RNA sequence: GGGAACGACUCGAGUAGAGUCGAAAAGUAUUAUGUCGCCGCUGUCCGCCAGAAGGAGGAGUGAAGAGGCGCGUCGCCGAGUUGCAAGAUGGCCACCCCAUCGAUGCUGCCCCAGUGGGCGUACAUGCACAUCGCCGGACAGGACGCUUCGGAGUACCAGGAAAUGUGUUUUCGAACACAUUUCCUGAAAAGAAACAACAACAACAAC
Reactivity to DMS in 0.01 (KOAc 150mM, MgCl2 10mM, bicine 150mM(pH8.5), 24C), signal-to-noise 1, nucleotides 027 to 156: g040u000a050u000u000a090u010g050u000c020g060c000c020g050c040u010g000u010c010c000g000c040c000a120g050a100a150g020g000a080g000g010a160g050u010g020a030a090g000a090g010g020c030g000c030g000u000c000g020c030c010g000a080g020u000u020g000c070a090a150g030a090u000g020g000c030c110a110c120c120c000c000a090u020c000g010a140u000g000c040u010g000c010c020c000c030a080g010u000g010g020g000c000g040u010a040c040a080u000g030c040a100c070a100u000c020g030c000c020g050g000a080c050a080g000g010a070c070g050c070u000u010c050g030g000a140g000u000a110c090
Reactivity to 2A3 in 0.01 (KOAc 150mM, MgCl2 10mM, bicine 150mM(pH8.5), 24C), signal-to-noise 2, nucleotides 027 to 156: g050u020a110u140u030a050u140g060u010c030g000c050c030g020c070u020g020u010c010c050g010c060c080a060g060a140a020g110g030a060g040g030a020g050u160g070a100a030g030a090g120g000c040g000c040g070u060c010g020c040c010g060a050g030u020u030g040c020a040a060g050a050u060g020g020c060c000a040c000c010c000c010a000u070c000g020a100u130g000c040u050g000c000c000c000c000a020g050u260g030g040g000c000g000u030a070c030a050u080g030c040a040c000a090u070c050g000c030c030g020g000a000c020a020g030g020a050c010g000c010u010u020c030g040g000a030g050u040a050c050